An RNA of 177 nucleotides, treated with DMS and 2A3 and read out base by base. 2A3 is a SHAPE reagent: it acylates the 2'-hydroxyl of flexible nucleotides of all four kinds. For DMS the reverse transcriptase was MarathonRT. The reactions ran in a buffer of 150 mM KOAc, 10 mM MgCl2 and 150 mM bicine (pH 8.5), at 24 C.

RNA sequence: GGGAACGACUCGAGUAGAGUCGAAAAAGCCGCGCGACGACGGCCUCGAUGCCCGUCGCGGUCGAUGACCUUGAUUCCUUGGGCGCUGACCCGCACCUUGAUGCGGCGGUCCUCCGACGGUAAGUAGCAUGUGAGUGACAUUCGUGUCACUCACAUGAAAAGAAACAACAACAACAAC
Reactivity to DMS in 0.01 (KOAc 150mM, MgCl2 10mM, bicine 150mM(pH8.5), 24C), signal-to-noise 3, nucleotides 027 to 126: a080g010c000c020g000c030g000c010g000a030c010g020a130c110g030g000c010c010u040c220g040a160u010g000c030c010c000g000u030c000g010c010g010g000u020c000g000a050u000g010a110c020c010u030u010g020a070u050u010c070c060u010u020g000g000g010c070g020c010u020g000a050c070c000c000g000c000a000c030c210u010u000g000a130u000g000c000g000g000c000g010g000u010c050c020u000c070c020g010a090c070g000g000u020a090a090g000u030a120g010
Reactivity to 2A3 in 0.01 (KOAc 150mM, MgCl2 10mM, bicine 150mM(pH8.5), 24C), signal-to-noise 6, nucleotides 027 to 126: a000g000c000c000g000c000g000c000g020a020c000g000a030c110g010g010c010c000u140c130g210a260u230g010c010c000c000g010u000c000g000c000g000g000u040c010g110a140u120g170a230c000c000u090u080g090a140u200u150c070c020u110u090g010g000g020c050g000c060u060g040a050c010c010c000g020c010a030c020c090u200u240g040a190u050g140c000g020g000c000g020g010u040c000c020u070c010c040g150a180c100g020g010u080a120a090g020u020a100g120